[RMDB]
RNA sequence: GGGAACGACUCGAGUAGAGUCGAAAACCCUCGGAGCUGGAGGGGGACCGCAGGGCCCGCGCCCGCGGAGUGGGGGUGCAGCCGCUCACCUGCCGUAAAUGCCCUCGGUGAUCCGGUUCCGCUUUAGGGGGCGGCGGAGCUUACUGCAGUCGGCGUAGUCGUAAUAAUUAUUCGUAAUUAUUACGACAAAAGAAACAACAACAACAAC
Reactivity to DMS in 0.01 (KOAc 150mM, MgCl2 10mM, bicine 150mM(pH8.5), 24C), signal-to-noise 1, nucleotides 027 to 156: c040c000c000u000c020g000g000a100g000c080u000g030g010a090g000g040g030g030g010a060c020c000g000c040a070g050g010g060c020c110c140g000c210g010c010c020c020g030c020g000g040a080g010u000g010g000g030g010g010u000g000c030a090g020c000c050g000c050u000c000a080c010c000u010g010c000c050g040u010a060a120a160u000g000c000c010c010u010c040g000g030u000g000a120u020c070c020g050g010u000u000c010c020g000c050u000u000u010a050g010g020g000g020g110c300g010g000c010g000g010a120g010c060u000u000a040c060u020g020c050a060g010u020c000g000g000c030g000u000a180
Reactivity to 2A3 in 0.01 (KOAc 150mM, MgCl2 10mM, bicine 150mM(pH8.5), 24C), signal-to-noise 3, nucleotides 027 to 156: c000c000c000u000c010g030g010a060g010c060u080g030g030a050g030g010g020g010g020a000c020c000g000c060a150g040g070g010c080c060c090g040c130g000c050c020c030g190c020g030g020a040g020u130g000g000g000g020g000u040g000c030a030g030c020c010g020c010u010c010a030c000c040u180g180c000c020g040u060a070a090a100u230g030c020c000c000u020c000g020g020u070g020a070u030c030c000g000g000u060u050c010c000g000c020u060u030u100a090g040g010g020g000g000c010g020g000c020g010g000a080g010c040u080u180a070c030u120g030c010a070g060u130c010g020g010c070g010u060a040